Notes: The record gives the reactivity of an RNA of 177 nucleotides to DMS and 2A3. DMS adducts were read by reverse transcription with MarathonRT. 2A3 adducts were read by reverse transcription with SuperScript II with manganese. The 2A3 profile rests on 5,631 reads.
RNA sequence: GGGAACGACUCGAGUAGAGUCGAAAAGUAUCAAACCUUACCUUUAGUUAAAGCGAAUUAUUCACAAUAUAAAAAAUCAUCUGAUCAAGUCGUAUUAGAAUUAGGUACAAAUGGCGACUUUACUGUCCCACAUAGUAAGGUUCGCCUUACUAUGUGGAAAAGAAACAACAACAACAAC
Reactivity to DMS in 0.01 (KOAc 150mM, MgCl2 10mM, bicine 150mM(pH8.5), 24C), signal-to-noise 3, nucleotides 027 to 126: g010u010a090u000c070a040a170a080c080c040u000u000a040c120c020u010u000u010a070g010u060u020a020a060a300g000c010g000a050a040u020u000a040u010u000c050a070c170a070a060u040a080u060a010a010a040a040a060a030u020c140a120u020c160u000g000a000u000c160a040a080g010u020c030g010u000a090u000u000a060g000a040a050u020u010a000g020g000u000a030c200a040a040a060u040g000g010c040g010a030c030u020u000u010a020c060u020g000u040c090
Reactivity to 2A3 in 0.01 (KOAc 150mM, MgCl2 10mM, bicine 150mM(pH8.5), 24C), signal-to-noise 7, nucleotides 027 to 126: g060u050a030u180c060a080a100a090c000c020u070u080a120c000c010u070u090u140a100g030u070u160a130a050a010g070c020g070a090a050u130u040a070u180u130c060a040c040a200a040u140a040u260a240a100a010a030a020a050u060c040a040u020c060u080g070a140u040c070a050a030g050u010c010g030u060a120u070u110a050g090a120a050u100u060a120g050g040u100a050c070a030a140a030u070g130g000c020g000a000c010u020u030u040a110c060u050g040u090c010